[RMDB]
RNA sequence: GGGAACGACUCGAGUAGAGUCGAAAAAAAAGAUAUGGAUUCACUACCCACCUGCCAAGCACGAGGAUCUCAAUUCGGAAACGAAUUGAGGGAGUGCUUGAAGCAGAGGUGAAUCCUAAGUCAAAAACAGAGUAUCAUUCUUCGGAAUGAUACUCUGAAAAGAAACAACAACAACAAC
Reactivity to DMS in 0.01 (KOAc 150mM, MgCl2 10mM, bicine 150mM(pH8.5), 24C), signal-to-noise 1, nucleotides 027 to 126: a020a080a160a130g010a070u040a250u000g000g000a010u000u000c020a040c000u020a120c030c010c030a300c160c000u000g000c000c000a020a000g010c000a000c000g030a240g050g000a050u010c000u000c020a000a010u000u000c000g020g000a090a050a130c000g010a030a010u000u000g000a010g020g010g000a030g020u000g030c000u020u000g000a050a180g000c000a000g060a100g000g000u000g020a020a010u000c000c010u000a020a130g020u030c100a050a100a170a130a180

The record gives the reactivity of an RNA of 177 nucleotides to DMS. For DMS, 1,054 sequencing reads were counted. The RNA was probed in 150 mM KOAc, 10 mM MgCl2 and 150 mM bicine (pH 8.5) at 24 C. Reactivities are given for positions 27 through 126.